[RMDB]
RNA sequence: GGGAACGACUCGAGUAGAGUCGAAAAGAGCGUUCGCGCUCAGUAUUUCCUAAGUCUCUUAAACUGAUGACCACGCUUGUCAGAUUAUCGGAAACGAUAAUCUUGGAUUUAGCGUGCAAGGCUUAAGAGAUAUGGAGCUGACAAGAUUCGUCUUGAAAGUAUGUGGAGACUUCGGUCUCCACAUACUAAAAGAAACAACAACAACAAC
Reactivity to 2A3 in 0.01 (KOAc 150mM, MgCl2 10mM, bicine 150mM(pH8.5), 24C), signal-to-noise 2, nucleotides 027 to 156: g030a020g000c040g000u120u080c130g030c040g030c270u000c000a010g000u020a150u060u210u080c000c000u010a150a050g030u000c000u000c000u020u010a040a020a020c020u070g040a060u160g050a250c060c010a010c020g000c000u000u000g000u000c000a000g000a000u000u010a000u010c020g050g020a070a050a050c000g000a000u000a000a000u000c000u020u110g040g000a020u150u230u260a010g000c000g010u000g020c000a000a100g000g000c000u000u010a010a000g000a000g010a000u010a030u050g010g000a010g000c030u010g050a010c000a010a040g030a250u220u150c060g080u030c080u060u050g050a120a190